[RMDB]
RNA sequence: GGGAACGACUCGAGUAGAGUCGAAAAGGCUCUAGGGGUAAGGGCAUUGCCUGACGACUUUUCUGGAUGGACACUCCCUCCUAAUGGUGAAUGGAAACUCCCUUUCUCAGUAGCCUCCUUGUAGUUCGCUCGCGUACGUUUUCGAACGUACGCGAGCAAAAGAAACAACAACAACAAC
Reactivity to 2A3 in 0.01 (KOAc 150mM, MgCl2 10mM, bicine 150mM(pH8.5), 24C), signal-to-noise 1, nucleotides 027 to 126: g020g030c060u000c000u010a110g000g000g000g120u040a000a000g000g000g030c010a080u000u030g080c000c000u020g010a010c040g070a070c110u090u070u130u170c090u250g000g000a000u030g010g000a010c010a100c230u050c000c000c000u040c000c000u030a000a080u100g000g000u020g230a080a070u000g000g080a100a010a020c050u110c020c000c000u000u010u040c060u000c000a070g000u160a000g000c010c000u030c000c010u030u000g050u010a050g050u000u020c010
This 177-nucleotide RNA was probed chemically with 2A3. High 2A3 reactivity points to a flexible backbone, as in loops and unpaired stretches. For 2A3, 417 sequencing reads were counted. The RNA was probed in 150 mM KOAc, 10 mM MgCl2 and 150 mM bicine (pH 8.5) at 24 C. For 2A3 the reverse transcriptase was SuperScript II with manganese. It was measured as part of the RMDB library RFM100.